Chemical mapping of a 177-nucleotide RNA with DMS. DMS adducts were read by reverse transcription with MarathonRT. It was measured as part of the RMDB library TTRINS. Conditions: 150 mM KOAc, 10 mM MgCl2 and 150 mM bicine (pH 8.5), 24 C.
RNA sequence: GGGAACGACUCGAGUAGAGUCGAAAAGAUAUGGAAUCAACGUCACCAUUUCCUAUGGGAGGCAGGGUGUCGGAAACGACACCACUGCCGAAGAACAUAGGAGAAUGGUGACGUUGAUUCCUAAGUCGUUAGGAACAAUCUUCGGAUUGUUCCUAACAAAAGAAACAACAACAACAAC
Reactivity to DMS in 0.01 (KOAc 150mM, MgCl2 10mM, bicine 150mM(pH8.5), 24C), signal-to-noise 1, nucleotides 027 to 126: g000a090u020a300u000g010g020a040a000u000c000a030a000c000g020u000c000a010c000c000a020u010u000u000c000c000u020a010u000g000g020g020a070g020g030c000a010g000g000g010u000g010u000c000g000g000a050a130a170c010g000a020c000a000c000c020a050c000u000g010c010c000g010a030a120g020a080a250c010a010u000a010g040g000a030g000a010a010u010g000g030u000g000a000c000g010u000u000g000a010u000u010c000c000u000a000a070g000u010c160